[RMDB]
RNA sequence: GGGAACGACUCGAGUAGAGUCGAAAAGGGGUCAGCAACAACAGCGAGUAUGCAUUUCGAGGAUCAUACCUGAAGCCUCCACGGGUAUGGGAGAAAUGUACUCGACAUGUUGCUGACGGAGGCACCCAAAAGUCUCAAACCUUCGGGUUUGAGACAACGUAACUGGUAUCUUCGGAUACCAGUUACGAAAAGAAACAACAACAACAAC
Reactivity to 2A3 in 0.01 (KOAc 150mM, MgCl2 10mM, bicine 150mM(pH8.5), 24C), signal-to-noise 3, nucleotides 027 to 156: g050g020g100g020u000c000a000g000c000a000a010c010a030a070c040a070g170c010g010a010g000u090a080u210g120c020a010u000u000u000c070g030a300g020g000a010u000c000a000u010a000c000c000u030g040a100a020g000c010c000u020c000c010a000c000g000g000g000u000a000u000g000g000g000a010g000a000a000a000u010g000u010a010c010u010c000g190a190c030a140u180g000u000u000g000c000u000g000a000c000g000g000a010g000g000c010a050c000c000c010a020a130a020a040g010u000c000u000c000a000a000a000c000c000u080u140c300g100g000g000u000u000u000g000a000g000a000c000a000a000
Chemical mapping of a 207-nucleotide RNA with 2A3. Reactivities are rounded to 0.1 and cut off at 0 and 3. The RNA was probed in 150 mM KOAc, 10 mM MgCl2 and 150 mM bicine (pH 8.5) at 24 C. 2A3 adducts were read by reverse transcription with SuperScript II with manganese.